[RMDB]
RNA sequence: GGGAACGACUCGAGUAGAGUCGAAAACUCAAGAAAUUCAAGUUGCGUGAUUCAGAAAUUGUCUUAAACUCAAUGGCACUACCGACUAGAAGUGUGGACAACUGGUUAUCUGUCGAAACAUACAAUAUGAAUCCAUGCAAUUCGUUGCAUGGAUUCAAAAAGAAACAACAACAACAAC
Reactivity to 2A3 in 0.01 (KOAc 150mM, MgCl2 10mM, bicine 150mM(pH8.5), 24C), signal-to-noise 3, nucleotides 027 to 126: c050u060c000a060a090g070a090a090a100u190u200c120a150a000g090u060u030g010c000g010u040g020a030u050u120c000a010g080a040a200a040u090u020g080u080c000u070u120a190a030a010c020u040c050a000a300u120g000g000c030a050c060u100a090c060c130g200a100c040u010a050g030a150a070g190u020g070u070g060g000a010c000a020a040c090u020g010g000u090u140a040u110c020u030g110u090c030g030a000a030a050c020a010u130a090c110a130a050u010a030
Reactivity to DMS in 0.01 (KOAc 150mM, MgCl2 10mM, bicine 150mM(pH8.5), 24C), signal-to-noise 3, nucleotides 027 to 126: c020u000c020a070a100g010a080a150a100u040u040c070a090a130g020u000u000g030c020g010u010g000a060u000u000c070a040g000a060a030a050u010u000g000u000c010u010u040a070a120a070c030u010c050a040a020u030g000g000c150a060c200u010a060c040c040g010a120c040u000a070g010a050a060g010u000g000u010g030g000a060c060a030a110c050u000g010g000u040u020a060u000c040u010g000u010c070g000a120a100a020c050a020u020a050c240a060a020u000a110

Chemical mapping of a 177-nucleotide RNA with 2A3 and DMS.
For 2A3, 1,175 sequencing reads were counted.
The reactions ran in a buffer of 150 mM KOAc, 10 mM MgCl2 and 150 mM bicine (pH 8.5), at 24 C.